[RMDB]
RNA sequence: GGGAACGACUCGAGUAGAGUCGAAAAAACAUAUGACUUGGAUGAUGUUGAUGUGGCAAUUCUUGACACGGAAUAUGGACUUACGGAUGUUGCAGCUGUCAAGCUCAACACAGGCCCAGAAUGGAAACUGCCAGUACCAAUUCGUUGGUACUGGCAGAAAAGAAACAACAACAACAAC
Reactivity to DMS in 0.01 (KOAc 150mM, MgCl2 10mM, bicine 150mM(pH8.5), 24C), signal-to-noise 1, nucleotides 027 to 126: a010a020c070a070u000a030u050g020a130c070u000u000g000g030a160u000g040a060u000g040u010u000g000a100u030g000u010g010g020c030a020a030u000u000c070u000u040g000a170c070a030c040g000g010a140a020u000a070u000g010g020a060c060u010u000a180c140g030g010a120u000g010u050u000g000c130a000g010c000u000g000u020c230a050a060g040c050u000c030a010a050c010a010c040a030g000g000c000c010c010a040g010a070a100u000g010g000a040a050a110